[RMDB]
The data come from the RNA Mapping Database (RMDB), library M2RFPK. This 207-nucleotide RNA was probed chemically with 2A3 and DMS.
RNA sequence: GGGAACGACUCGAGUAGAGUCGAAAAGUAUCCCUAGAUGAUAAAACACCGCACAUGGCUCGUAAGAGCGGUUAAAUUAGCAAGUAAUGCAAAUUACGCGAGGUAACGCAUGGCCUAGGCUCAUUAGAAAAGGGAGAAUCCUUCGGGAUUCUCCCAACUACCUCUUCACGUUCGCGUGAAGAGGUAGAAAAGAAACAACAACAACAAC
Reactivity to 2A3 in 0.01 (KOAc 150mM, MgCl2 10mM, bicine 150mM(pH8.5), 24C), signal-to-noise 1, nucleotides 027 to 156: g020u020a140u040c070c000c000u010a030g080a160u130g010a000u060a150a020a000a010c020a040c030c010g040c040a060c030a140u010g060g000c010u020c080g070u040a100a090g040a010g050c010g000g000u060u030a020a030a080u040u060a040g020c000a220a000g040u020a090a020u030g000c030a050a150a020u070u060a040c050g010c000g020a040g150g000u080a100a000c000g020c040a020u070g030g000c000c020u010a010g000g000c000u000c070a080u050u130a080g090a070a190a040a020g000g010g000a000g000a000a000u000c000c000u010u060c180g010g000g010a000u000u000c030u000c000c000c000a000a000
Reactivity to DMS in 0.01 (KOAc 150mM, MgCl2 10mM, bicine 150mM(pH8.5), 24C), signal-to-noise 1, nucleotides 027 to 156: g030u030a100u010c000c010c000u000a120g000a030u020g000a150u000a080a070a200a090c040a010c020c010g000c030a130c120a150u010g000g010c070u000c040g060u000a080a160g000a090g000c010g000g060u000u010a070a090a160u000u010a090g070c010a060a090g020u000a050a060u000g040c170a100a130a070u000u020a020c020g010c090g030a080g000g010u000a030a040c050g000c030a070u000g000g020c070c010u000a080g020g000c010u000c020a040u000u010a120g000a070a050a180a170g030g020g020a030g030a060a010u010c040c000u000u000c290g040g050g020a020u020u000c000u000c000c000c000a000a010
The reactions ran in a buffer of 150 mM KOAc, 10 mM MgCl2 and 150 mM bicine (pH 8.5), at 24 C.